[RMDB]
RNA sequence: GGGAACGACUCGAGUAGAGUCGAAAACAGAACAACAACAACAACAGCAGCUGGAUCAAUUGGUUCCUCGGAAUCAAGGGCAACGAGUUCCUCUGCCACGUGCCCACCAACUACUUUCAGGACACGACGUGAUUACGUCAUUCGUGACGUAAUCACGAAAAGAAACAACAACAACAAC
Reactivity to 2A3 in 0.01 (KOAc 150mM, MgCl2 10mM, bicine 150mM(pH8.5), 24C), signal-to-noise 2, nucleotides 027 to 126: c010a020g120a110a030c010a000a010c000a000a000c000a020a000c010a060a000c000a000g020c000a000g000c000u040g010g030a110u100c070a070a250u090u070g030g040u020u030c030c030u040c180g140g000a000a000u030c010a050a110g000g020g030c010a030a010c080g030a020g010u060u020c020c000u120c090u110g000c000c000a050c030g010u030g000c020c000c010a000c030c020a010a080c020u150a040c000u050u000u160c060a050g010g110a080c070a010c090g080a010
Reactivity to DMS in 0.01 (KOAc 150mM, MgCl2 10mM, bicine 150mM(pH8.5), 24C), signal-to-noise 2, nucleotides 027 to 126: c100a180g000a070a190c020a030a010c000a090a030c020a040a010c020a100a010c120a090g000c010a030g010c030u000g000g000a070u000c130a040a140u000u000g010g000u000u000c000c020u030c300g080g020a000a010u000c030a060a000g010g000g000c050a020a000c010g000a300g000u000u000c020c020u010c120u000g030c020c060a100c040g030u000g030c010c010c000a210c110c060a020a070c090u000a020c070u010u000u010c140a080g010g000a050c140a060c140g010a150
Structure probing data (2A3 and DMS) for a 177-nucleotide construct. For 2A3 the reverse transcriptase was SuperScript II with manganese. The RNA was probed in 150 mM KOAc, 10 mM MgCl2 and 150 mM bicine (pH 8.5) at 24 C.